This 177-nucleotide RNA was probed chemically with DMS. For DMS the reverse transcriptase was MarathonRT. Reactivities are given for positions 27 through 126.
[RMDB]
RNA sequence: GGGAACGACUCGAGUAGAGUCGAAAAUCAGCACAGUGUUUGCGCUGAUCGUGGCGAUUCGCCUCGGCCGCGAUUGGCGGCUCCUAACGUUGGCUGCACCGGGUGUGGGUUGCGGGAAGGUGUGCGACCCCAUUCCACCUUUCGAGGUGGAAUGGGGAAAAGAAACAACAACAACAAC
Reactivity to DMS in 0.01 (KOAc 150mM, MgCl2 10mM, bicine 150mM(pH8.5), 24C), signal-to-noise 1, nucleotides 027 to 126: u000c000a050g020c010a100c020a040g000u010g000u000u010u010g010c000g020c000u000g000a020u000c000g000u010g020g010c010g000a090u000u020c190g000c160c110u000c040g010g080c010c000g020c010g000a060u000u020g000g010c010g010g000c070u010c180c070u010a030a080c040g000u000u010g020g000c020u000g020c120a160c070c030g030g000g010u010g000u010g010g000g010u000u010g030c070g060g000g010a040a050g010g020u000g020u010g000c030g000a200
Conditions: 150 mM KOAc, 10 mM MgCl2 and 150 mM bicine (pH 8.5), 24 C.